[RMDB]
An RNA of 170 nucleotides, treated with DMS and 2A3 and read out base by base.
RNA sequence: GGGAACGACUCGAGUAGAGUCGAAAACUUUUUGCUGCUGAGACUUUACGUGCCACUGAAGAGGCGUCUAAGCAGUCUUAUGCUAUUGCCACCAUCAAAGAAAUUGUUGGUGAGCGCCAACUAUUACACCGUGGCUAGUUCGCUAGCCACAAAAGAAACAACAACAACAAC
Reactivity to DMS in 0.01 (KOAc 150mM, MgCl2 10mM, bicine 150mM(pH8.5), 24C), signal-to-noise 3, nucleotides 027 to 129: c000u000u030u050u030u120g000c030u000g030c010u000g000a040g040a030c020u000u010u000a000c290g030u000g090c030c020a120c110u040g050a230a130g020a110g000g000c030g020u000c030u020a000a000g040c060a070g010u060c100u040u030a040u030g030c100u010a050u050u030g020c000c070a010c030c020a000u040c000a030a060a200g020a050a100a080u030u010g000u000u030g000g040u020g020a080g040c110g020c110c060a090a050c090u060a050u000u000a140c110a090c030c180
Reactivity to 2A3 in 0.01 (KOAc 150mM, MgCl2 10mM, bicine 150mM(pH8.5), 24C), signal-to-noise 9, nucleotides 027 to 129: c020u110u040u010u160u220g010c020u000g000c000u010g010a000g010a040c000u120u110u150a060c130g090u140g040c030c000a070c090u150g090a130a020g030a050g080g000c010g010u020c000u010a030a020g000c010a000g010u020c010u050u130a080u130g030c020u030a050u090u200g000c000c000a010c020c000a020u040c010a020a050a050g090a050a240a120u060u040g020u000u000g010g010u000g030a040g030c000g000c000c000a070a090c020u060a050u170u170a080c070a040c000c080
Source: RMDB library 15KLIB, as collected in RNAgym. High DMS reactivity at an A or C suggests that its Watson-Crick edge is free.